[RMDB]
This 170-nucleotide RNA was probed chemically with DMS and 2A3. It was measured as part of the RMDB library 15KLIB.

RNA sequence: GGGAACGACUCGAGUAGAGUCGAAAAUCUAUGACAACUCUAUCACAUGCCCAUUGACAGUUGCAGUAAUUGCUGGAGUUGCUGGUGCUCGCAUUCCAGACGUACCUACUACAUUGGCUUGGGUGAAACAUCCUAACGUUCGCGUUAGGAAAAAGAAACAACAACAACAAC
Reactivity to DMS in 0.01 (KOAc 150mM, MgCl2 10mM, bicine 150mM(pH8.5), 24C), signal-to-noise 7, nucleotides 027 to 129: u040c060u000a040u020g030a130c120a040a040c050u050c010u060a090u050c110a020c060a100u020g040c010c000c000a050u020u010g020a000c050a010g040u000u010g030c060a010g010u010a040a140u050u000g000c010u030g040g000a000g030u030u050g030c050u020g010g060u000g040c090u040c070g030c050a070u000u000c000c000a040g030a080c130g010u000a060c130c050u000a040c010u000a070c030a050u020u010g010g020c040u000u000g000g000g000u030g000a080a050a020c040a000
Reactivity to 2A3 in 0.01 (KOAc 150mM, MgCl2 10mM, bicine 150mM(pH8.5), 24C), signal-to-noise 9, nucleotides 027 to 129: u020c010u030a120u160g070a060c040a060a050c050u030c030u140a110u160c060a040c010a130u150g010c000c000c010a020u020u080g040a040c030a030g030u050u020g030c010a010g010u070a080a090u100u150g020c000u010g020g020a060g040u070u060g030c030u060g050g140u180g100c090u100c110g000c010a010u020u010c000c000a000g020a050c030g030u020a040c000c010u000a010c000u010a010c010a040u010u020g000g000c000u020u010g020g010g000u020g040a040a030a020c060a070